Chemical mapping of a 177-nucleotide RNA with DMS and 2A3. For 2A3 the reverse transcriptase was SuperScript II with manganese. The reactions ran in a buffer of 150 mM KOAc, 10 mM MgCl2 and 150 mM bicine (pH 8.5), at 24 C. It was measured as part of the RMDB library OK2TRN.
[RMDB]
RNA sequence: GGGAACGACUCGAGUAGAGUCGAAAAAGUGUGAGGAGUGAGGUCGGGAUGUACCUCGUGUCCUUGGGGCAUCCUGUCCUAGCAGCUGGUGGUUGGAGUGGAAGCUCAAGCAAGGAGGGGUCAGCUGACGCAUAAAACAUUUCGAUGUUUUAUGCGUAAAAGAAACAACAACAACAAC
Reactivity to DMS in 0.01 (KOAc 150mM, MgCl2 10mM, bicine 150mM(pH8.5), 24C), signal-to-noise 7, nucleotides 027 to 126: a090g010u000g010u010g010a090g000g010a140g020u000g010a040g010g010u000c010g020g000g010a030u000g010u000a100c010c000u000c130g020u010g010u010c110c100u000u000g000g000g000g000c020a020u000c010c010u000g000u000c010c010u000a110g010c050a070g010c040u000g020g020u000g010g010u000u000g010g000a080g020u010g010g010a090a130g000c040u010c070a070a100g020c110a070a110g000g000a110g000g000g000g010u000c050a040g010c080u010g010
Reactivity to 2A3 in 0.01 (KOAc 150mM, MgCl2 10mM, bicine 150mM(pH8.5), 24C), signal-to-noise 3, nucleotides 027 to 126: a000g180u150g010u040g010a060g010g010a060g050u140g020a010g000g010u030c010g020g020g020a010u030g020u220a300c000c010u020c030g020u070g050u060c030c000u060u090g000g000g000g000c020a000u000c000c000u010g030u010c000c010u010a030g000c000a000g000c020u040g010g030u040g010g070u060u100g050g010a060g010u090g040g060a060a010g010c020u040c090a020a030g020c040a030a020g050g010a050g000g020g000g010u020c010a010g000c030u050g030